[RMDB]
RNA sequence: GGGAACGACUCGAGUAGAGUCGAAAAACUAGCUAGACACUGGAUCACGACAGUACGAUCCAUGAUGAUCACAUGCGUACUGAUCUGACGUACAUCGGUACCACUAGCCAUGCAUGCACACGUCGCGACUCGUACCGCCAUUCGUGGCGGUACGAGUAAAAGAAACAACAACAACAAC
Reactivity to 2A3 in 0.01 (KOAc 150mM, MgCl2 10mM, bicine 150mM(pH8.5), 24C), signal-to-noise 2, nucleotides 027 to 126: a000c040u080a040g030c000u040a050g020a060c010a010c130u070g050g040a040u010c010a010c110g110a040c040a050g060u090a030c030g040a040u070c070c000a010u010g030a060u090g050a060u130c070a040c010a080u070g000c010g000u030a040c000u010g050a230u010c000u070g040a010c030g070u100a030c040a050u020c010g040g000u010a050c010c010a040c110u030a000g010c040c020a030u110g000c030a010u090g030c070a100c010a000c150g030u040c030g040c050g070
Reactivity to DMS in 0.01 (KOAc 150mM, MgCl2 10mM, bicine 150mM(pH8.5), 24C), signal-to-noise 2, nucleotides 027 to 126: a080c070u000a020g020c010u010a010g000a100c160a040c020u000g000g020a110u000c010a160c160g010a120c120a040g010u020a070c050g000a160u020c150c070a050u000g000a030u020g000a070u000c180a210c030a000u000g000c030g000u000a060c030u000g010a030u000c020u000g010a040c000g060u000a150c260a050u000c090g030g010u000a020c030c040a090c080u000a050g010c020c070a010u000g030c010a050u000g020c070a000c160a100c030g030u000c070g010c130g040
Source: RMDB library OK2TRN, as collected in RNAgym.
Chemical mapping of a 177-nucleotide RNA with 2A3 and DMS.
For DMS, 974 sequencing reads were counted.
For 2A3, 1,434 sequencing reads were counted.
DMS adducts were read by reverse transcription with MarathonRT.
As a SHAPE reagent, 2A3 marks flexible, mostly unpaired nucleotides at the ribose 2'-OH.
Values are in units of 0.01, from 0 to 300, in steps of 10.